[RMDB]
About this RNA: Chemical mapping of a 177-nucleotide RNA with 2A3 and DMS. For DMS the reverse transcriptase was MarathonRT. The reactions ran in a buffer of 150 mM KOAc, 10 mM MgCl2 and 150 mM bicine (pH 8.5), at 24 C.
RNA sequence: GGGAACGACUCGAGUAGAGUCGAAAAAGUCUCGGACUCAGGGUCCUGUCUGAGGCGGCCACCCCGAAGCGUGGGGUUUGCGGAGACGUAGGGCCUGGCGGAGGGAAGGAUGGGGAAGCAUCUAAGGCCCAGUUAUAAAAUUCGUUUUAUAACUGGGAAAAGAAACAACAACAACAAC
Reactivity to 2A3 in 0.01 (KOAc 150mM, MgCl2 10mM, bicine 150mM(pH8.5), 24C), signal-to-noise 3, nucleotides 027 to 126: a000g020u000c010u000c010g000g030a030c020u040c080a040g000g070g020u030c050c010u020g000u010c010u020g010a010g040g030c010g010g030c030c020a040c010c010c000c010g110a160a050g220c120g160u240g010g000g000g000u020u060u130g010c010g020g040a070g010a080c030g060u100a050g010g010g000c000c020u010g010g010c080g030g170a130g040g010g030a120a060g030g020a110u160g000g010g000g010a030a030g030c030a060u070c030u090a090a110g130g000
Reactivity to DMS in 0.01 (KOAc 150mM, MgCl2 10mM, bicine 150mM(pH8.5), 24C), signal-to-noise 5, nucleotides 027 to 126: a130g020u000c020u000c010g000g010a020c000u010c060a260g030g000g000u000c010c020u010g000u000c010u000g000a060g010g000c010g000g010c040c290a090c020c000c000c020g010a130a120g020c200g020u010g000g010g010g000u000u000u000g020c040g010g000a120g010a060c130g030u010a050g000g010g010c030c020u000g000g010c160g010g000a190g000g020g000a130a100g010g010a150u010g020g010g020g000a100a100g010c130a040u000c060u020a080a110g010g000
Source: RMDB library OK2TST, as collected in RNAgym.